[RMDB]
RNA sequence: GGGAACGACUCGAGUAGAGUCGAAAACUCGAUGAAGCAGAAGAUGUUACUGAAUCUGUGCAAGAAGAAGCACAACCAGUAGAAGUACCUGUUGAAGAUAUUGCGCAGGUUGUCAUAGCUGACACCUCUUACUCACGUAGUUCGCUACGUGAGUAAGAAAAGAAACAACAACAACAAC
Reactivity to 2A3 in 0.01 (KOAc 150mM, MgCl2 10mM, bicine 150mM(pH8.5), 24C), signal-to-noise 3, nucleotides 027 to 126: c010u010c020g060a070u090g090a100a000g010c030a000g010a120a010g040a110u070g040u080u030a010c010u010g050a050a020u030c050u050g000u000g000c040a020a010g090a060a010g080a070a010g110c010a000c000a020a030c010c010a010g010u000a000g040a120a010g040u050a080c000c010u020g010u060u050g040a040a010g030a060u070a090u160u110g080c080g000c020a010g000g000u030u070g020u000c020a050u090a060g040c040u050g000a000c010a010c000c000u000
Reactivity to DMS in 0.01 (KOAc 150mM, MgCl2 10mM, bicine 150mM(pH8.5), 24C), signal-to-noise 2, nucleotides 027 to 126: c080u000c040g010a110u000g000a180a100g000c030a030g000a140a110g040a090u000g000u000u010a000c030u000g000a080a050u000c130u000g010u000g010c000a050a070g060a150a100g000a110a170g010c060a040c030a030a050c120c010a020g000u000a000g000a130a100g000u000a070c090c030u010g010u000u020g000a080a080g000a050u000a040u000u000g030c090g040c060a020g000g020u000u000g000u000c020a110u000a100g000c150u000g000a050c030a020c060c020u010